[RMDB]
RNA sequence: GGGAACGACUCGAGUAGAGUCGAAAACGGUCGGUGGUAGUCGGACGGCCCAAUCAGACAGCGCGGGUCAUAUCACGCGUUCGUGCACAGUUGGGUGUUUAUCCACAGGGGUGCGUUUGUCGGCGGCACCCGGAUGCAUAUUCGUAUGCAUCCGGGUAAAAGAAACAACAACAACAAC
Reactivity to 2A3 in 0.01 (KOAc 150mM, MgCl2 10mM, bicine 150mM(pH8.5), 24C), signal-to-noise 5, nucleotides 027 to 126: c040g020g020u030c020g010g040u040g030g060u050a090g060u060c030g000g070a040c020g050g020c000c000c000a000a070u120c020a030g070a090c000a010g020c010g000c000g000g020g030u110c100a120u120a050u260c070a110c040g000c020g020u040u040c090g020u050g060c040a020c000a150g020u060u000g000g040g000u030g060u070u140u110a070u020c000c030a020c020a090g050g010g000g030u060g010c020g030u050u110u110g060u050c040g010g010c010g020g020c020
Reactivity to DMS in 0.01 (KOAc 150mM, MgCl2 10mM, bicine 150mM(pH8.5), 24C), signal-to-noise 5, nucleotides 027 to 126: c090g020g010u010c030g030g030u010g000g000u000a090g010u020c070g010g000a050c090g010g020c020c000c010a050a060u000c140a130g000a060c040a020g000c020g020c020g000g000g000u020c300a120u040a080u010c020a060c020g020c020g010u000u010c140g040u020g010c130a080c160a150g000u010u000g000g000g000u010g010u030u040u030a070u000c040c020a080c080a110g010g000g010g020u000g000c040g010u010u010u010g010u010c020g000g010c070g000g010c100
This 177-nucleotide RNA was probed chemically with 2A3 and DMS. Source: RMDB library OK1LIB, as collected in RNAgym. The reactions ran in a buffer of 150 mM KOAc, 10 mM MgCl2 and 150 mM bicine (pH 8.5), at 24 C. The DMS profile rests on 9,707 reads. Values cover nucleotides 27 to 126.